[RMDB]
RNA sequence: GGGAACGACUCGAGUAGAGUCGAAAAACGAGGUACGCCUCGAAAAUAUGACCGGUGUCAUAGCCUCUAGCACACAGAGGUCGCGUGGGUUCAACUCCCCCCCUUUUCCGAGGGUAUCGGACACCAAAAAACACAAUUUGGUUCGCCAAAUUGUGAACGUUAGGUGAGACUUCGGUCUCACCUAACGAAAAGAAACAACAACAACAAC
Reactivity to 2A3 in 0.01 (KOAc 150mM, MgCl2 10mM, bicine 150mM(pH8.5), 24C), signal-to-noise 1, nucleotides 027 to 156: a000c000g010a010g020g030u050a070c230g070c050c000u000c000g030a000a000a090a010u130a070u050g020a050c040c090g090g000u080g000u050c000a010u020a040g020c000c010u000c000u020a060g010c070a020c000a000c000a120g020a010g000g000u000c000g000c000g050u220g030g000g000u030u200c000a020a020c070u040c010c000c020c000c000c000c030u090u020u010u130c000c000g000a000g030g020g000u020a030u060c000g030g000a000c000a030c010c000a000a000a000a040a100a000c020a000c000a000a010u000u000u000g010g040u010u030c100g020c060c010a000a000a000u010u020g010u000g000a040a020